[RMDB]
RNA sequence: GGGAACGACUCGAGUAGAGUCGAAAAAGCCGUCGACUACGGUCGACGGCAUUUCUUACAAUGUCAAAAUUAACCGACACUUUACUGGACAUUGUAAGAACGGACGCUAUAGUUACGACUAUAGCGACGGUGACCUCGAGUUCGCUCGAGGUCACCGAAAAGAAACAACAACAACAAC
Reactivity to 2A3 in 0.01 (KOAc 150mM, MgCl2 10mM, bicine 150mM(pH8.5), 24C), signal-to-noise 1, nucleotides 027 to 126: a000g020c000c000g000u000c040g000a000c000u040a010c250g160g000u000c000g000a000c000g000g000c000a000u000u000u000c000u000u000a000c000a000a000u010g040u040c010a000a000a000a300u170u070a140a100c070c020g150a100c010a010c140u170u270u280a080c110u250g030g000a010c040a040u000u040g000u000a000a000g000a000a040c000g160g000a010c010g000c000u000a000u000a000g000u060u020a010c300g000a000c200u000a000u000a000g000c010g000a000